Conditions: 150 mM KOAc, 10 mM MgCl2 and 150 mM bicine (pH 8.5), 24 C. Structure probing data (2A3) for a 207-nucleotide construct. 2A3 adducts were read by reverse transcription with SuperScript II with manganese. Values cover nucleotides 27 to 156. It was measured as part of the RMDB library ARCHII.
[RMDB]
RNA sequence: GGGAACGACUCGAGUAGAGUCGAAAACAGGCGUAGAUUCGCGUUGACUGCGAUUCGUAGGUCACGUCUACGUUAAAACGUCACAGUUAAAUUAUAACUGCAAAUAACGAAAAUUCUUACGCAGUAGCUGCUUAGUCAGGCUGCGUGAUCCAAUGACCUGGUCUACCGGGUUCGCCCGGUAGACCAGAAAAGAAACAACAACAACAAC
Reactivity to 2A3 in 0.01 (KOAc 150mM, MgCl2 10mM, bicine 150mM(pH8.5), 24C), signal-to-noise 1, nucleotides 027 to 156: c040a040g170g000c040g000u080a040g020a040u080u080c100g010c020g080u050u040g000a020c000u000g020c000g300a300u030u120c040g000u020a010g040g040u020c000a000c000g010u050c000u040a000c000g080u020u060a000a140a000a000c050g020u070c020a000c000a080g010u000u010a000a210a180u300u290a130u110a190a000c000u040g000c060a070a010a270u040a260a000c010g070a020a000a210a120u210u050c050u140u000a000c000g060c000a000g050u010a140g130c000u000g000c020u120u040a070g050u270c000a000g000g000c000u040g000c020g000u000g000a000u060c050c140a080a050u050g000a190c010